The record gives the reactivity of an RNA of 177 nucleotides to 2A3 and DMS. Values cover nucleotides 27 to 126. Conditions: 150 mM KOAc, 10 mM MgCl2 and 150 mM bicine (pH 8.5), 24 C. Source: RMDB library TTRINS, as collected in RNAgym.

RNA sequence: GGGAACGACUCGAGUAGAGUCGAAAAGAUAUGGAGAGGACUACCCACCUGACCUCGGGACACGAAGAACCGUCCGUUCGGAAACGAACGGACGGGGAGUGUCAUUCAGAGGUCCUCUCCUAAGUCACAUAUUGUCUUCCUUCGGGAAGACAAUAUGAAAAGAAACAACAACAACAAC
Reactivity to 2A3 in 0.01 (KOAc 150mM, MgCl2 10mM, bicine 150mM(pH8.5), 24C), signal-to-noise 1, nucleotides 027 to 126: g010a020u060a070u060g000g000a000g000a000g000g000a010c010u080a130c010c110c050a050c000c050u010g020a050c030c150u120c300g050g220g050a000c010a010c000g300a300a160g000a030a000c000c010g050u000c010c000g060u000u030c000g000g010a020a020a000c010g010a000a000c030g050g000a000c000g030g000g000g010a000g000u020g000u020c000a000u010u010c040a000g000a040g000g000u030c010c000u050c000u000c000c000u000a050a040g020u080c020a010
Reactivity to DMS in 0.01 (KOAc 150mM, MgCl2 10mM, bicine 150mM(pH8.5), 24C), signal-to-noise 2, nucleotides 027 to 126: g050a060u000a040u010g000g000a000g000a040g020g000a020c000u010a080c090c030c120a300c040c000u000g010a010c070c170u000c220g000g020g000a030c000a010c000g000a130a260g000a120a240c000c000g000u000c000c010g050u000u000c010g000g000a020a020a050c010g010a010a000c000g030g000a010c010g000g000g000g000a000g040u000g000u000c000a100u000u000c020a020g010a120g000g000u000c000c000u010c010u000c000c000u010a000a070g010u020c040a300